[RMDB]
RNA sequence: GGGAACGACUCGAGUAGAGUCGAAAAAUCAUUUCAUCUGGAGUUGGCAAUGGGAAUUGUCCCAGGUAUAUGUCACAGCUUGUGAGCGGAUCCGACUCAGGGGUGAUGAAUCUGAAGAGCUUGAAGACCCUUUGGUUAGCUUCGGCUAACCAAAGGGAAAAGAAACAACAACAACAAC
Reactivity to 2A3 in 0.01 (KOAc 150mM, MgCl2 10mM, bicine 150mM(pH8.5), 24C), signal-to-noise 3, nucleotides 027 to 126: a000u060c050a030u040u010u050c050a090u020c020u040g080g010a050g000u040u000g010g010c080a160a110u030g000g020g090a150a190u220u190g140u270c000c000c000a000g000g120u080a130u010a030u200g010u060c020a020c020a090g210c090u220u210g050u030g130a040g000c030g050g000a050u060c000c010g000a000c000u000c020a000g000g060g020g000u010g000a000u010g020a060a020u030c040u060g130a040a030g030a000g110c040u090u070g040a030a010g100a030
Reactivity to DMS in 0.01 (KOAc 150mM, MgCl2 10mM, bicine 150mM(pH8.5), 24C), signal-to-noise 1, nucleotides 027 to 126: a090u000c050a030u000u000u000c020a040u010c030u000g000g030a060g000u000u030g000g020c090a110a180u000g000g000g000a070a280u000u080g020u000c000c010c000a000g000g000u050a040u040a240u090g000u010c000a030c010a110g030c290u080u030g030u010g000a050g000c040g000g000a110u000c030c000g000a030c040u000c010a060g000g020g000g020u030g020a060u000g070a090a070u020c010u000g000a020a060g010a090g010c040u000u000g000a150a020g060a290
Source information
The record gives the reactivity of an RNA of 177 nucleotides to 2A3 and DMS. The DMS profile rests on 1,521 reads. 2A3 adducts were read by reverse transcription with SuperScript II with manganese. The RNA was probed in 150 mM KOAc, 10 mM MgCl2 and 150 mM bicine (pH 8.5) at 24 C.